[RMDB]
RNA sequence: GGGAACGACUCGAGUAGAGUCGAAAAUAAUUAUAACUGCAAACAAUAACAAUUCUUACGCUGUAGCUGCCUAAACACCAGCAUAGCGUGAUCCGUCUGACUUCACCCAAGGGUUAGAUCCGGGUCUCAAAUUAAUUGGGUUACGUUAAAUGCCGCCGUAAUUUCCAAAGUUCGCUUUGGAAAUUACAAAAGAAACAACAACAACAAC
Reactivity to 2A3 in 0.01 (KOAc 150mM, MgCl2 10mM, bicine 150mM(pH8.5), 24C), signal-to-noise 1, nucleotides 027 to 156: u010a000a110u240u160a120u230a270a160c090u120g000c040a180a100a070c040a030a120u190a180a020c090a090a140u300u000c040u110u130a000c000g020c000u050g010u100a100g000c010u010g000c010c000u040a010a010a010c010a000c000c000a000g000c000a010u010a000g000c000g010u000g000a000u030c000c000g010u000c000u000g010a000c000u010u040c040a060c030c000c000a010a000g000g000g000u010u000a000g000a030u020c150c130g000g070g030u060c070u000c030a210a230a080u140u250a000a090u040u000g090g030g000u010u100a000c040g000u010u010a000a140a160u130g040c010c040g000c000c030
Structure probing data (2A3) for a 207-nucleotide construct. 2A3 adducts were read by reverse transcription with SuperScript II with manganese. The 2A3 profile rests on 445 reads. Source: RMDB library ARCHII, as collected in RNAgym.